RNA sequence: GGGAACGACUCGAGUAGAGUCGAAAACGUCGGAAUUUACUGCAAAACCUGCCGUAAAUCUGACCUAACUCAGCUGUACUUCACCAGAAUCGGAACCAUGUACCUAUAUUACUGUAGUGAUCACCGUGUCGGAACUACCCAACAAAUCUACGACAGCACAGUAACACGUGUUCGCACGUGUUACUGUAAAAGAAACAACAACAACAAC
Reactivity to DMS in 0.01 (KOAc 150mM, MgCl2 10mM, bicine 150mM(pH8.5), 24C), signal-to-noise 1, nucleotides 027 to 156: c150g060u000c010g000g060a100a090u000u030u000a110c000u000g000c030a040a100a160a300c280c270u000g080c010c080g010u000a000a030a090u000c000u000g000a000c000c080u000a250a300c020u000c040a030g070c070u000g020u010a050c040u000u000c010a080c000c050a160g020a140a070u020c040g040g020a060a180c010c040a040u000g000u000a040c100c110u000a110u000a080u020u000a050c060u000g030u000a050g020u020g040a030u000c000a100c000c030g000u010g000u000c010g000g020a080a070c040u000a170c030c020c050a000a070c040a040a140a030u010c020u000a140c020g020a030c060a110g000c120
Reactivity to 2A3 in 0.01 (KOAc 150mM, MgCl2 10mM, bicine 150mM(pH8.5), 24C), signal-to-noise 4, nucleotides 027 to 156: c070g010u000c000g000g040a120a080u000u000u010a000c000u010g010c000a040a030a250a300c040c060u020g000c000c030g000u000a010a000a020u000c000u010g000a000c000c020u030a050a030c030u010c050a020g010c060u050g010u070a110c030u050u050c020a010c050c010a040g060a100a060u100c080g020g030a020a040c050c010a090u110g050u090a050c050c000u060a030u070a060u210u110a080c030u070g050u120a040g010u020g080a090u080c010a010c060c030g030u020g040u040c050g050g000a030a050c030u040a050c050c000c000a040a070c040a010a140a050u100c040u120a030c050g110a040c030a000g010c060